Description:
Structure probing data (2A3 and DMS) for a 177-nucleotide construct. 2A3 adducts were read by reverse transcription with SuperScript II with manganese.

[RMDB]
RNA sequence: GGGAACGACUCGAGUAGAGUCGAAAAUGGUGAGCGGAUCUGUGGGCGAUAUCAGAGCUCCAAAGUAUAAGGAGUCCAGGAAUGUGAAACUGCUACUCAAGUACUUUGGCAUCAGUUUCACACAGCCAUUAUGACUGGGGUUCGCCCCAGUCAUAAUAAAAGAAACAACAACAACAAC
Reactivity to 2A3 in 0.01 (KOAc 150mM, MgCl2 10mM, bicine 150mM(pH8.5), 24C), signal-to-noise 4, nucleotides 027 to 126: u100g010g000u080g040a040g030c020g020g030a020u020c000u020g040u080g040g020g000c030g040a010u020a050u200c070a040g010a010g060c010u000c010c010a110a060a000g140u080a080u030a140a080g060g000a000g000u010c040c040a010g020g080a120a060u100g010u010g020a030a000a020c000u010g030c040u070a030c030u030c200a000a060g030u070a130c060u030u050u060g020g000c000a020u040c000a010g000u000u010u000c010a010c000a000c000a010g020c020c020
Reactivity to DMS in 0.01 (KOAc 150mM, MgCl2 10mM, bicine 150mM(pH8.5), 24C), signal-to-noise 4, nucleotides 027 to 126: u040g010g030u000g000a080g010c090g000g020a060u030c020u020g020u010g020g020g020c020g000a060u000a090u030c100a080g000a110g000c030u010c000c010a060a060a110g030u030a060u020a110a100g000g010a020g010u000c300c030a050g000g000a100a130u020g010u020g010a020a050a030c010u020g000c070u000a060c050u020c050a040a040g010u040a090c140u030u030u010g000g030c050a020u010c000a000g000u000u020u010c030a020c040a050c180a090g020c110c030